[RMDB]
RNA sequence: GGGAACGACUCGAGUAGAGUCGAAAAUAGUUGGCUUUUGGCGCGAUCCAUCCAGCGGUGGUGCCAUACCGUUUGACUUCACUAAGUUUGAUAAGACUAAAUGUCCUAUUCAAGCCGUGAUAGUCGUUCCUCGUGCUUAGUAACUAAGGAUGAAAUGCUUGAAUUUUUUGUUCGCAAAAAAUUCAAGAAAAGAAACAACAACAACAAC
Reactivity to DMS in 0.01 (KOAc 150mM, MgCl2 10mM, bicine 150mM(pH8.5), 24C), signal-to-noise 1, nucleotides 027 to 156: u010a080g010u020u000g000g020c050u010u000u000u000g020g040c080g040c030g000a030u000c000c030a280u000c150c130a250g020c090g030g000u000g010g040u000g000c010c000a020u000a040c020c010g000u010u000u000g000a050c030u000u020c020a030c000u000a090a010g010u000u000u000g000a030u000a060a040g000a060c010u000a070a120a140u010g050u010c000c020u000a060u010u000c010a000a020g010c000c030g020u000g000a120u000a030g020u000c000g020u000u000c000c010u000c130g050u000g000c030u000u000a040g020u000a060a180c070u000a050a080g010g010a100u000g020a060a090a150u000g000
Reactivity to 2A3 in 0.01 (KOAc 150mM, MgCl2 10mM, bicine 150mM(pH8.5), 24C), signal-to-noise 4, nucleotides 027 to 156: u200a000g100u050u100g030g010c050u060u110u060u130g030g010c000g010c040g040a030u000c020c030a040u080c060c070a050g000c080g040g010u080g020g060u040g000c000c010a010u010a020c010c000g030u000u030u110g010a010c010u000u010c010a010c020u060a140a000g000u010u000u000g010a010u010a020a010g000a000c020u060a080a150a200u300g000u000c000c000u030a100u070u060c010a000a000g000c000c010g020u020g020a030u050a020g000u000c000g000u000u000c000c000u000c010g010u030g000c000u040u050a040g030u080a200a190c110u020a060a000g090g020a040u090g030a060a080a160u140g020

The data come from the RNA Mapping Database (RMDB), library PDB130. An RNA of 207 nucleotides, treated with DMS and 2A3 and read out base by base. The 2A3 profile rests on 3,162 reads. For DMS the reverse transcriptase was MarathonRT. The reactions ran in a buffer of 150 mM KOAc, 10 mM MgCl2 and 150 mM bicine (pH 8.5), at 24 C.